[RMDB]
RNA sequence: GGGAACGACUCGAGUAGAGUCGAAAAAUUAUCAGAAGAUAAUAUUUUAGCCUUUUUUGAUGAGGCUGGUAAUCAAAUUAGCAUCUCAUCUGAAGAAGAUUCUGAGACGUUUACCGUAGACAGGGGAUCGAUAAUGGAUAUUCGUAUCCAUUAUCGAAAAAGAAACAACAACAACAAC
Reactivity to 2A3 in 0.01 (KOAc 150mM, MgCl2 10mM, bicine 150mM(pH8.5), 24C), signal-to-noise 4, nucleotides 027 to 126: a000u040u030a000u000c010a000g280a300a050g000a130u030a070a030u060a300u070u100u080u140a070g020c000c000u040u040u000u010u120u140g020a020u020g010a010g040g000c040u000g030g030u130a130a120u150c150a180a130a120u040u030a020g030c000a120u050c010u000c020a030u000c040u060g030a010a010g000a040a000g010a050u050u030c050u120g000a020g000a010c010g000u030u010u050a300c010c010g010u030a040g040a090c030a030g020g010g010g030a020
Reactivity to DMS in 0.01 (KOAc 150mM, MgCl2 10mM, bicine 150mM(pH8.5), 24C), signal-to-noise 7, nucleotides 027 to 126: a030u010u000a020u010c000a170g010a140a210g000a030u000a010a020u000a090u000u010u010u000a180g000c040c010u010u000u000u010u010u010g010a030u000g010a020g010g010c130u000g000g000u000a050a070u010c240a060a050a300u000u000a020g000c020a060u000c000u000c010a020u000c020u000g010a020a040g000a060a040g010a070u000u010c030u000g020a030g020a100c060g000u000u000u010a080c020c000g010u010a090g000a100c140a070g000g010g010g020a240
Chemical mapping of a 177-nucleotide RNA with 2A3 and DMS.
DMS adducts were read by reverse transcription with MarathonRT.
It was measured as part of the RMDB library OK2TRN.
Values cover nucleotides 27 to 126.
The DMS profile rests on 9,164 reads.